The record gives the reactivity of an RNA of 177 nucleotides to DMS and 2A3. For DMS, 1,347 sequencing reads were counted. DMS adducts were read by reverse transcription with MarathonRT. Source: RMDB libraries RFM100 and RFMREP, as collected in RNAgym. The reactions ran in a buffer of 150 mM KOAc, 10 mM MgCl2 and 150 mM bicine (pH 8.5), at 24 C. For 2A3 the reverse transcriptase was SuperScript II with manganese. Values cover nucleotides 27 to 126.
RNA sequence: GGGAACGACUCGAGUAGAGUCGAAAACACACCCGGAUCGAGAGUCGGAUUGGUGAUCAGACGAACAUCGCCACCGCCGGGUGCCCAGGUGUCGUAUACGCCACCAAAGAACAUGGCCUUGAAGACCCGCUUAUCUGUACUUCGGUACAGAUAAGCGAAAAGAAACAACAACAACAAC
Reactivity to DMS in 0.01 (KOAc 150mM, MgCl2 10mM, bicine 150mM(pH8.5), 24C), signal-to-noise 2, nucleotides 027 to 126: c300a300c050a020c000c030c000g000g000a150u020c140g020a080g000a130g020u040c040g070g000a050u050u000g000g000u010g020a000u000c040a090g000a140c090g000a050a020c270a040u000c020g000c030c020a070c040c050g010c000c000g000g090g000u020g000c000c010c000a250g000g000u000g000u000c070g080u020a180u020a060c110g000c000c030a000c000c070a150a020a080g000a220a100c120a130u020g000g000c020c130u000u030g020a140a000g000a070c050c010
Reactivity to 2A3 in 0.01 (KOAc 150mM, MgCl2 10mM, bicine 150mM(pH8.5), 24C), signal-to-noise 5, nucleotides 027 to 126: c070a000c000a000c020c010c010g000g010a240u210c110g090a070g030a100g240u060c070g020g000a100u090u200g010g000u030g010a030u040c040a020g220a250c160g040a070a040c040a070u030c010g000c000c000a000c020c010g000c000c000g000g000g020u030g000c000c000c000a010g000g040u040g000u040c000g000u100a080u030a190c020g010c010c010a020c010c030a060a040a020g070a080a040c040a110u080g010g000c010c020u090u110g040a070a040g050a090c010c000